[RMDB]
RNA sequence: GGGAACGACUCGAGUAGAGUCGAAAACGAAGGAAAGCUUGACCAGCUAAUCUUCUGCAACGCCAUUACGAGGACUGCCCUUAGAGGCUCAUGGCGAUAGGUCACCCCGCCGGUGGGUCAGCUGCUUAUACCCGUGCACGGUUCGCCGUGCACGGAACUUUAACGUUACGUUCGCGUAACGUUAAAGAAAAGAAACAACAACAACAAC
Reactivity to 2A3 in 0.01 (KOAc 150mM, MgCl2 10mM, bicine 150mM(pH8.5), 24C), signal-to-noise 3, nucleotides 027 to 156: c050g000a030a000g030g040a230a070a000g000c010u030u050g020a030c010c010a000g010c000u040a070a060u040c030u060u000c040u070g050c070a080a060c030g020c030c000a020u080u110a090c140g030a100g080g030a070c060u090g020c000c000c000u050u110a110g030a120g080g000c000u030c030a010u020g000g010c010g020a060u100a090g030g010u050c030a060c010c010c000c020g100c060c050g070g030u110g030g000g000u030c000a010g030c050u080g000c030u100u070a070u080a220c000c000c000g000u010g000c000a000c010g000g010u030u050c110g040c050c000g000u000g000c000a000c000g010g020a010a000
Reactivity to DMS in 0.01 (KOAc 150mM, MgCl2 10mM, bicine 150mM(pH8.5), 24C), signal-to-noise 1, nucleotides 027 to 156: c030g010a080a040g030g000a120a190a080g020c030u000u020g030a070c090c030a190g000c020u000a090a140u000c010u000u050c020u010g000c080a120a110c030g030c040c030a040u000u000a130c080g010a150g030g020a090c080u000g010c020c000c030u000u020a110g010a160g010g000c000u010c090a060u010g000g020c010g000a100u000a040g000g020u000c040a090c040c010c020c010g060c040c040g010g050u000g000g000g020u010c020a110g000c010u000g010c010u000u000a220u000a120c070c000c000g050u000g000c010a000c010g010g000u000u020c300g020c000c000g090u000g000c000a010c010g000g000a000a010